Chemical mapping of a 207-nucleotide RNA with 2A3. The RNA was probed in 150 mM KOAc, 10 mM MgCl2 and 150 mM bicine (pH 8.5) at 24 C.
RNA sequence: GGGAACGACUCGAGUAGAGUCGAAAAUACUCUUUCGAGAGUAAUCUUACCUUUGUGCUGGACAGGAUUGACAGUGACUAAGACAGCCCUCCCAUUGGGAGGAGUCGAGUCACUUUCUCGAUUCCAGCACUCUGGUGAAUCGUCGAUUCGUCGACAAGGUAGCUCCUCAAUUCGUUGAGGAGCUACCAAAAGAAACAACAACAACAAC
Reactivity to 2A3 in 0.01 (KOAc 150mM, MgCl2 10mM, bicine 150mM(pH8.5), 24C), signal-to-noise 2, nucleotides 027 to 156: u170a000c010u010c010u030u170u170c230g120a050g000a010g010u050a040a160u070c070u020u080a040c000c000u000u020u020g000u000g000c000u020g010g010a030c030a220g040g200a300u130u160g060a050c010a080g010u010g000a000c000u020a210a160g010a000c050a040g130c040c000c030u010c030c000c070a290u090u300g000g000g000a000g000g000a000g000u010c000g010a000g000u010c000a000c020u000u020u010c000u020c010g070a140u060u070c000c000a000g000c000a030c000u000c000u000g020g070u040g000a080a200u260c210g020u000c000g010a030u130u050c250g030u030c010g120a000c000a000a000